[RMDB]
RNA sequence: GGGAACGACUCGAGUAGAGUCGAAAAACUCGUACGAGAACUCACACUCACACUCGUACACGUUCACGUACGAACGAACUCACGUUCACACGAGAGAUCGAGAGAGUGUGAGAGUUCGUGUUCGAUCGUGAGUGUUCGAGUUCACGAUCACUCGAACACAACGUCCACCUUUCGAGGUGGACGUUGUAAAAGAAACAACAACAACAAC
Reactivity to DMS in 0.01 (KOAc 150mM, MgCl2 10mM, bicine 150mM(pH8.5), 24C), signal-to-noise 1, nucleotides 027 to 156: a010c010u000c020g020u000a100c020g000a090g010a060a140c010u000c000a090c000a060c010u000c030a070c070a200c040u000c030g030u030a050c110a060c070g000u000u000c060a200c050g080u000a050c000g110a060a150c000g020a110a270c070u000c090a080c040g000u000u010c060a070c050a060c040g000a080g020a160g000a070u000c000g010a070g030a170g000a130g010u000g050u010g000a020g000a080g010u000u000c010g010u020g000u000u000c070g040a060u000c030g020u000g000a080g000u000g010u060u000c190g010a050g020u000u000c000a050c050g020a010u000c070a060c010u000c030g010a010a050c030
Reactivity to 2A3 in 0.01 (KOAc 150mM, MgCl2 10mM, bicine 150mM(pH8.5), 24C), signal-to-noise 5, nucleotides 027 to 156: a000c050u030c040g100u150a060c090g020a030g040a200a040c010u020c000a010c000a010c010u010c000a070c000a020c050u000c010g050u110a070c080a030c100g030u040u030c040a060c130g080u140a080c110g000a080a000c010g000a090a020c030u020c040a040c020g040u110u090c050a060c000a000c100g020a030g000a000g000a090u110c020g010a020g010a010g000a010g100u000g000u010g000a000g000a000g000u010u010c010g000u010g020u060u100c070g000a010u000c030g000u010g000a000g010u060g080u090u150c110g050a050g040u030u010c020a020c030g020a040u040c020a010c060u000c010g000a040a000c010
An RNA of 207 nucleotides, treated with DMS and 2A3 and read out base by base. DMS adducts were read by reverse transcription with MarathonRT. 2A3 adducts were read by reverse transcription with SuperScript II with manganese. The data come from the RNA Mapping Database (RMDB), library OK3TST.